[RMDB]
RNA sequence: GGGAACGACUCGAGUAGAGUCGAAAAAUCCACGCUGGAUACAUGAUGUCGCGGUACUCCUUUGUCUUGGAGAAGGAGAAGACGGGACCACCAGCCGCGUUACCCCACGCCGCAUUCAGCUGCGGAAGCAUACGAGCUGAUUCGUCAGCUCGUAUGCAAAAGAAACAACAACAACAAC
Reactivity to DMS in 0.01 (KOAc 150mM, MgCl2 10mM, bicine 150mM(pH8.5), 24C), signal-to-noise 3, nucleotides 027 to 126: a100u020c020c020a180c160g010c000u020g000g020a150u010a050c200a100u070g020a110u010g020u010c000g000c020g000g010u010a230c020u000c000c010u000u000u000g000u020c180u020u010g000g000a180g000a030a000g000g000a040g000a040a080g000a080c000g020g000g000a020c000c040a110c020c040a030g030c000c110g010c040g000u010u000a060c010c010c000c040a160c120g010c000c010g000c000a070u000u020c230a050g030c230u000g030c010g040g000a090a120
Reactivity to 2A3 in 0.01 (KOAc 150mM, MgCl2 10mM, bicine 150mM(pH8.5), 24C), signal-to-noise 9, nucleotides 027 to 126: a010u030c030c010a040c030g010c010u030g000g020a070u130a230c080a090u160g050a170u140g080u040c050g020c020g300g010u060a080c010u010c010c000u020u020u080g260u120c160u120u280g190g080a150g020a040a000g000g010a010g000a030a020g180a040c010g020g020g010a000c010c000a020c000c000a000g010c000c020g030c020g010u020u080a190c010c000c000c000a010c030g030c000c000g010c000a040u170u230c100a190g020c050u020g000c010g000g020a000a020